[RMDB]
Structure probing data (DMS and 2A3) for a 177-nucleotide construct. For 2A3 the reverse transcriptase was SuperScript II with manganese.
RNA sequence: GGGAACGACUCGAGUAGAGUCGAAAACGACGGUCGAAUUUAUGAAAGUAGCCAUUGGCGGUAUUCUCGCCGGUUUUGUGGUGAGCUGGCUGUACGGUCGCUCGCUGCGAUUCCUCAGCCGCUGGGACACCUGCCCUAUCUUCGGAUAGGGCAGGUGAAAAGAAACAACAACAACAAC
Reactivity to DMS in 0.01 (KOAc 150mM, MgCl2 10mM, bicine 150mM(pH8.5), 24C), signal-to-noise 1, nucleotides 027 to 126: c050g020a060c090g060g000u010c060g020a110a070u000u010u010a060u020g000a110a060a070g020u000a110g010c040c020a150u020u000g010g010c000g000g040u000a070u000u000c090u000c030g010c080c060g010g000u000u000u000u000g020u000g000g010u000g000a010g010c000u020g070g020c000u000g000u020a050c290g030g000u000c000g000c010u010c070g020c070u000g010c050g010a020u000u000c020c010u010c110a160g000c000c000g010c010u010g000g000g000a300
Reactivity to 2A3 in 0.01 (KOAc 150mM, MgCl2 10mM, bicine 150mM(pH8.5), 24C), signal-to-noise 1, nucleotides 027 to 126: c070g120a020c080g030g070u060c010g040a040a070u070u160u120a110u290g050a030a070a000g080u040a020g040c000c020a070u060u160g030g000c010g040g020u010a110u090u030c090u050c010g040c020c000g010g020u030u000u030u060g010u040g000g040u040g000a050g020c100u120g080g000c040u060g130u300a130c260g070g020u000c000g000c000u040c010g000c040u000g010c000g000a030u020u030c010c000u040c030a020g040c000c010g010c000u020g030g000g040a020